[RMDB]
RNA sequence: GGGAACGACUCGAGUAGAGUCGAAAAUGUGUCCUAGGGAAUUGGAAGGUCAUCCUUCACAGGAUCGUGUGGAAGUCCUGCUCGGGGCUGAAGCAUUAAAACCAUUCGAGCUAGUCAAUGCGUGGCGUUACCUCCAGGUUCUUCGGAACCUGGAGAAGAUCUAAAAUAGUUUCGACUAUUUUAGAUCAAAAGAAACAACAACAACAAC
Reactivity to 2A3 in 0.01 (KOAc 150mM, MgCl2 10mM, bicine 150mM(pH8.5), 24C), signal-to-noise 5, nucleotides 027 to 156: u140g040u020g020u030c010c030u040a070g000g030g060a080a130u140u120g040g040a040a040g020g050u150c040a110u130c030c010u080u120c040a040c020a060g030g010a040u050c040g010u010g000u020g040g030a020a020g010u010c000c010u040g090c090u070c090g020g000g000g000c010u020g000a010a000g020c010a000u060u110a020a020a020a040c030c020a040u090u110c060g010a020g040c040u050a030g050u060c060a100a080u110g050c060g090u050g040g000c040g050u070u090a040c010c010u000c010c000a000g000g000u000u000c000u010u040c090g050g010a000a000c000c000u000g010g000a000g000a000a010
Reactivity to DMS in 0.01 (KOAc 150mM, MgCl2 10mM, bicine 150mM(pH8.5), 24C), signal-to-noise 4, nucleotides 027 to 156: u010g020u010g020u010c020c020u000a100g000g030g010a060a110u010u000g020g020a100a130g030g010u000c090a140u000c030c010u000u020c110a120c090a100g000g020a060u000c110g010u020g020u000g000g010a240a070g030u010c010c010u000g030c170u000c130g000g010g010g000c010u000g000a300a300g000c020a040u000u000a060a050a130a070c000c020a100u000u000c030g000a090g020c060u000a100g000u000c060a060a100u000g010c070g000u000g000g020c050g020u000u000a090c090c000u000c000c000a020g010g010u000u010c000u000u010c300g040g010a010a010c000c000u010g000g000a010g000a010a050